[RMDB]
RNA sequence: GGGAACGACUCGAGUAGAGUCGAAAAGCAUAACUGUUCGCAGUUAUGCAAAACACGAAGCUGGAAACAGACGCAGUGAAACAAAGAAAAGCGAAAACAAAAAAAGCCAACAGUUCGCUGUUGGCAACCUCUGAUAUUAGUUCGCUAAUAUCAGAGGAAAAGAAACAACAACAACAAC
Reactivity to 2A3 in 0.01 (KOAc 150mM, MgCl2 10mM, bicine 150mM(pH8.5), 24C), signal-to-noise 2, nucleotides 027 to 126: g000c000a000u000a010a010c000u020g030u050u040c110g000c040a000g000u020u000a000u000g000c010a000a030a000a020c030a010c010g020a050a010g020c000u020g000g040a040a040a020c010a010g120a100c030g000c070a010g010u020g040a080a060a010c030a040a150a020g170a100a170a020a000g030c010g030a020a020a040a100c110a050a100a020a010a010a020a020g000c000c000a000a000c000a010g030u070u100c150g030c120u000g010u020u000g000g130c000a000a000
Reactivity to DMS in 0.01 (KOAc 150mM, MgCl2 10mM, bicine 150mM(pH8.5), 24C), signal-to-noise 3, nucleotides 027 to 126: g010c000a010u000a000a020c000u010g000u010u000c070g010c000a060g000u000u000a000u000g000c000a010a020a130a060c040a000c020g000a140a300g030c020u000g000g000a190a110a160c010a020g000a040c060g000c110a150g010u000g000a080a050a160c070a020a080a100g000a080a070a040a100g000c010g000a030a040a070a160c130a010a010a060a110a080a080a110g020c000c000a000a010c010a020g010u010u010c210g010c000u000g000u000u000g000g000c000a000a010
The data come from the RNA Mapping Database (RMDB), library M2PK50. Chemical mapping of a 177-nucleotide RNA with 2A3 and DMS. For DMS, 1,989 sequencing reads were counted. The reactions ran in a buffer of 150 mM KOAc, 10 mM MgCl2 and 150 mM bicine (pH 8.5), at 24 C.